[RMDB]
RNA sequence: GGGAACGACUCGAGUAGAGUCGAAAAGAUAUGGAGUAGCAGAGAAGCUCGAUGAAAGCUUUCGGAAACGAAAGCUGGAGAGCGUCGACGAAGCUACUCCUAAGUCAAAGUGGUCUUCGGACCACAACAAGUCACCAAGGUUCGCCUUGGUGACUUGAAAAGAAACAACAACAACAAC
Reactivity to DMS in 0.01 (KOAc 150mM, MgCl2 10mM, bicine 150mM(pH8.5), 24C), signal-to-noise 1, nucleotides 027 to 126: g000a030u010a300u010g000g000a040g020u000a010g030c000a040g000a170g000a030a070g010c000u000c010g000a130u000g070a120a080a030g000c000u000u010u000c000g000g000a160a070a160c010g000a000a000a000g000c010u020g000g010a080g000a010g000c010g000u010c100g000a160c100g000a080a130g010c000u000a040c000u010c000c000u000a040a040g000u030c070a150a130a190g050u000g000g000u010c000u000u020c140g010g000a030c000c000a010c000a040a100